RNA sequence: GGGAACGACUCGAGUAGAGUCGAAAAGAUAUGGAGUAGCACCAUCCUGAUGACCAGACUCGGAAACGAGUCUGCAAGGGAGGUGAACUACUACUCCUAAGUCAAAACCUAGGCUUCGGCCUAGGAAGUAGUACAGAAGCUUCGGCUUCUGUACUACAAAAGAAACAACAACAACAAC
Reactivity to DMS in 0.01 (KOAc 150mM, MgCl2 10mM, bicine 150mM(pH8.5), 24C), signal-to-noise 2, nucleotides 027 to 126: g010a040u010a300u000g000g000a010g000u000a010g010c000a000c000c010a130u000c020c000u010g010a170u000g000a270c300c010a020g000a000c000u000c000g060g020a090a030a200c020g020a000g010u000c000u010g020c060a090a120g000g020g020a130g010g010u000g020a040a020c110u030a250c010u000a020c010u000c000c010u000a020a190g000u000c030a100a060a110a220c000c000u000a000g000g000c000u010u010c250g040g020c000c000u000a000g000g000a020a030
Reactivity to 2A3 in 0.01 (KOAc 150mM, MgCl2 10mM, bicine 150mM(pH8.5), 24C), signal-to-noise 3, nucleotides 027 to 126: g060a010u050a020u230g000g000a000g000u020a000g000c020a010c010c020a300u040c010c030u250g160a300u120g060a120c030c050a000g000a010c010u000c000g020g040a040a090a050c010g000a010g000u010c010u010g000c010a060a150g030g000g020a040g040g000u040g020a040a050c090u250a020c010u010a010c000u000c000c000u000a120a040g060u020c050a000a040a050a240c000c000u000a010g000g020c030u070u060c300g170g010c020c000u010a000g000g000a020a030
This 177-nucleotide RNA was probed chemically with DMS and 2A3. The RNA was probed in 150 mM KOAc, 10 mM MgCl2 and 150 mM bicine (pH 8.5) at 24 C. Source: RMDB library TTRDES, as collected in RNAgym. For 2A3 the reverse transcriptase was SuperScript II with manganese. The 2A3 profile rests on 3,396 reads.